[RMDB]
RNA sequence: GGGAACGACUCGAGUAGAGUCGAAAACAAACGCUUCGGCGUUUGCCAUCCUAAGUCGUCCAACAGCGAGCGUUGUCAGCUCGUGGGUCGGAAACGACCCGAGCUUGGAUUUACGCUCGACAUGGACGAUAUGGACGCGGGUGUUCUUCGGAACACCACCAAGGUGAAAGUUCGCUUUCACCUUGGUAAAAGAAACAACAACAACAAC
Reactivity to DMS in 0.01 (KOAc 150mM, MgCl2 10mM, bicine 150mM(pH8.5), 24C), signal-to-noise 2, nucleotides 027 to 156: c000a000a020a010c000g050c010u000u020c300g030g010c000g000u000u010u010g020c000c020a090u000c000c000u000a110a230g010u000c010g010u000c010c000a030a130c080a190g010c020g010a020g000c000g030u010u000g010u000c030a070g000c000u010c060g030u000g020g010g020u010c000g030g020a120a090a280c010g030a230c010c010c010g000a000g000c000u000u010g060g010a070u000u000u000a010c020g030c000u000c000g010a040c070a300u000g000g000a050c020g020a010u000a060u010g000g000a070c130g030c060g000g070g030u000g020u000u000c000u000u000c300g030g010a060a020c010a010c000c010
Reactivity to 2A3 in 0.01 (KOAc 150mM, MgCl2 10mM, bicine 150mM(pH8.5), 24C), signal-to-noise 4, nucleotides 027 to 156: c010a000a010a010c010g000c020u070u100c300g170g000c000g000u010u000u010g040c000c000a070u030c000c000u060a150a080g020u000c000g010u000c000c030a070a040c040a220g060c020g010a000g000c000g000u010u010g020u020c010a000g020c020u000c030g120u290g010g000g010u000c010g040g070a130a070a060c000g000a000c000c000c000g000a000g000c000u090u120g150g000a010u200u120u180a000c000g000c000u000c000g010a040c010a050u040g010g000a010c000g000a000u010a030u040g000g020a020c080g040c120g170g000g000u000g010u010u000c000u030u040c160g110g010a010a000c000a010c000c000
Record summary
Source: RMDB library RNAMAK, as collected in RNAgym. The record gives the reactivity of an RNA of 207 nucleotides to DMS and 2A3. Values cover nucleotides 27 to 156. The reactions ran in a buffer of 150 mM KOAc, 10 mM MgCl2 and 150 mM bicine (pH 8.5), at 24 C. High 2A3 reactivity points to a flexible backbone, as in loops and unpaired stretches.